[RMDB]
An RNA of 177 nucleotides, treated with 2A3 and read out base by base. It was measured as part of the RMDB library OK1LIB. Values are in units of 0.01, from 0 to 300, in steps of 10. The reactions ran in a buffer of 150 mM KOAc, 10 mM MgCl2 and 150 mM bicine (pH 8.5), at 24 C.
RNA sequence: GGGAACGACUCGAGUAGAGUCGAAAACACUCGUGUCAGUGGUGGCAUCCGCUGCCUCGCUGCGUGCUGCUGGCGUCGACUACGAUGCUGCAGUGUGAUAGAGAGUGCCCGGCACGAGCGGUGCUGCGCGUCAGGUGCAGUUCGCUGCACCUGACGCAAAAGAAACAACAACAACAAC
Reactivity to 2A3 in 0.01 (KOAc 150mM, MgCl2 10mM, bicine 150mM(pH8.5), 24C), signal-to-noise 2, nucleotides 027 to 126: c030a000c000u020c000g020u000g010u030c010a070g010u110g200g000u000g090g000c020a070u070c110c100g020c140u040g000c000c000u000c020g030c000u010g000c030g020u040g000c000u030g060c000u130g000g020c040g010u030c020g020a250c070u230a190c130g000a000u020g000c000u000g000c000a010g000u000g020u060g090a120u160a020g040a020g000a020g020u110g050c020c000c000g010g030c000a000c040g000a030g070c050g130g000u070g010c010u060g000c050
For 2A3 the reverse transcriptase was SuperScript II with manganese.